[RMDB]
RNA sequence: GGGAACGACUCGAGUAGAGUCGAAAAGAUAUGGAUCCAAGGGAGCAGGUCACAGGCAACAGCACUGACUCUCGGAAACGAGAGUCAGUGACAUGCCUUAAGCUGCGAAGAACUUGGAUCCUAAGUCGUAGGUACAUAAGUUCGCUUAUGUACCUACAAAAGAAACAACAACAACAAC
Reactivity to 2A3 in 0.01 (KOAc 150mM, MgCl2 10mM, bicine 150mM(pH8.5), 24C), signal-to-noise 3, nucleotides 027 to 126: g080a050u170a090u220g000g010a010u010c000c000a000a010g000g000g010a060g040c010a010g140g300u280c140a060c030a090g000g000c010a060a060c040a210g060c010a010c000u000g000a000c000u000c010u010c030g010g040a110a090a050c000g000a020g000a010g010u000c000a000g000u010g000a000c000a000u010g000c000c000u000u000a060a020g050c000u000g000c030g140a190a050g000a020a020c000u000u000g000g000a000u000c010c000u000a060a010g020u010c090
Reactivity to DMS in 0.01 (KOAc 150mM, MgCl2 10mM, bicine 150mM(pH8.5), 24C), signal-to-noise 7, nucleotides 027 to 126: g000a090u020a300u000g010g010a030u000c000c000a000a010g000g000g010a080g030c010a010g010g000u000c090a130c300a020g000g020c000a010a050c300a170g010c000a010c000u010g000a030c010u010c000u000c010g010g010a070a070a180c020g010a030g000a010g000u000c010a000g010u000g000a020c080a220u000g000c000c000u000u000a130a150g000c000u000g000c010g000a120a150g010a070a170c000u000u010g000g000a010u000c000c000u000a020a100g000u010c160